[RMDB]
RNA sequence: GGGAACGACUCGAGUAGAGUCGAAAACCAGCUUGCCUGUGUCCUAGGGAAUUGGAAGGUCAUCCUUCACAGGAUCGUGUGGAAGUCCUGCUCGGGGCUGAAGCAUUAAAACCAUUCGAGCUAGUCAAAAACCGGCUGAUCUUCGGAUCAGCCGGAACAUAUCAGGUAAGUUCGCUUACCUGAUAUGAAAAGAAACAACAACAACAAC
Reactivity to 2A3 in 0.01 (KOAc 150mM, MgCl2 10mM, bicine 150mM(pH8.5), 24C), signal-to-noise 8, nucleotides 027 to 156: c010c000a020g060c080u070u140g030c000c010u030g010u030g020u100c040c070u080a090g030g020g050a140a150u180u100g060g040a120a060g080g050u130c040a070u080c020c010u060u070c020a010c010a030g020g010a040u050c040g000u010g000u020g020g050a030a000g010u010c010c020u060g050c040u050c080g010g010g010g000c010u010g010a020a000g010c000a010u030u110a010a020a030a080c080c030a070u130u170c020g010a000g010c020u070a030g110u170c090a040a030a020a080a100c000c000g000g000c000u000g000a000u000c000u020u100c270g030g000a000u000c000a000g010c010c010g000g000a000a000
Reactivity to DMS in 0.01 (KOAc 150mM, MgCl2 10mM, bicine 150mM(pH8.5), 24C), signal-to-noise 3, nucleotides 027 to 156: c020c000a110g040c050u000u010g030c010c020u010g010u010g000u000c060c040u000a100g010g010g030a120a140u000u010g030g010a070a050g020g030u000c060a110u000c000c030u000u000c100a090c060a090g030g000a060u000c120g000u000g020u030g000g000a260a050g040u000c010c030u000g000c190u000c110g000g000g000g020c000u000g010a300a300g010c020a050u020u010a070a060a090a100c020c040a130u000u000c030g000a130g010c020u010a060g020u000c050a030a050a070a110a140c000c010g040g010c000u000g000a000u000c000u000u000c300g040g000a030u000c000a010g000c010c000g000g000a000a000